An RNA of 177 nucleotides, treated with 2A3 and DMS and read out base by base.

[RMDB]
RNA sequence: GGGAACGACUCGAGUAGAGUCGAAAACGAAUAAAAGCUGAAAGCAUCUAAGCUUGAAGUCGCCCCUGAAAAUAGACAUUGUUUGAGAUCACUCUUAAAAGAAGAGGUUGAUAGAGUCGGGAUAUAACCGAGAUUAAGAUUUCGAUCUUAAUCUCGGAAAAGAAACAACAACAACAAC
Reactivity to 2A3 in 0.01 (KOAc 150mM, MgCl2 10mM, bicine 150mM(pH8.5), 24C), signal-to-noise 4, nucleotides 027 to 126: c000g000a010a000u060a010a080a000a010g000c000u010g100a110a090a020g100c030a100u100c050u070a030a010g010c000u000u000g010a120a040g030u010c000g010c000c000c000c020u050g100a110a060a040a060u180a030g040a060c060a100u110u090g070u120u090u130g130a140g000a030u030c000a000c030u000c040u030u060a180a140a010a010g140a020a010g030a010g050g050u040u070g040a040u020a050g110a020g050u030c090g060g020g020a020u040a030u050a120a030
Reactivity to DMS in 0.01 (KOAc 150mM, MgCl2 10mM, bicine 150mM(pH8.5), 24C), signal-to-noise 4, nucleotides 027 to 126: c030g020a040a030u020a180a080a020a040g010c020u000g010a120a170a170g010c180a050u020c050u020a230a080g020c010u000u000g000a060a190g000u010c000g010c110c000c000c050u000g010a040a050a080a110u040a070g020a060c080a050u020u000g000u010u010u010g000a140g020a040u010c000a060c000u000c010u000u000a070a070a090a100g020a030a020g000a030g000g000u020u000g010a040u010a070g000a110g010u000c020g000g000g000a130u040a060u020a110a150

About this RNA:
DMS (dimethyl sulfate) methylates the pairing face of unpaired adenines and cytosines. Conditions: 150 mM KOAc, 10 mM MgCl2 and 150 mM bicine (pH 8.5), 24 C. For 2A3 the reverse transcriptase was SuperScript II with manganese.